[RMDB]
RNA sequence: GGGAACGACUCGAGUAGAGUCGAAAACAUGCUAUAUUUCUGUUAUCAUCAUUAGUUAAUGAAAAUAACUCUCGUGCUUCAGAAAAGUCAAAUAUUGUAUCCAUACAUACAUCUCCAAAACUAUCGCUUAUACGUUUAUCUUUAACGAUACCUAUACGCGAUAUUGUCAAUUCGUUGACAAUAUCGCAAAAGAAACAACAACAACAAC
Reactivity to 2A3 in 0.01 (KOAc 150mM, MgCl2 10mM, bicine 150mM(pH8.5), 24C), signal-to-noise 6, nucleotides 027 to 156: c030a030u090g030c030u070a080u060a100u220u090u020c060u040g060u060u060a040u060c020a010u000c010a020u030u080a060g070u050u140a090a050u100g070a030a060a060a110u030a040a030c010u010c020u020c070g050u050g020c020u030u070c020a010g040a080a130a040a010g050u060c060a040a050a050u130a070u080u060g010u020a050u020c070c010a040u040a140c010a010u050a040c020a060u080c030u020c040c000a000a070a050a050c030u060a040u100c020g010c050u100u030a040u030a140c030g030u020u060u060a080u080c040u060u170u030a050a010c060g000a010u040a070c010c040u080a080u020a190c090
Reactivity to DMS in 0.01 (KOAc 150mM, MgCl2 10mM, bicine 150mM(pH8.5), 24C), signal-to-noise 1, nucleotides 027 to 156: c050a110u000g000c060u000a220u000a110u000u000u000c010u000g050u030u010a040u000c040a150u010c020a060u010u000a200g000u010u000a050a050u000g000a100a230a050a020u000a040a050c030u000c110u000c050g030u000g000c080u000u000c090a120g010a050a110a120a160g010u000c070a080a070a090u000a050u010u000g000u000a110u000c010c070a140u000a130c070a090u010a020c070a090u000c030u000c010c020a010a050a130a160c050u000a040u000c010g030c050u000u010a100u010a050c110g030u000u000u000a070u030c100u000u000u010a090a020c000g010a050u000a030c010c070u000a210u000a140c110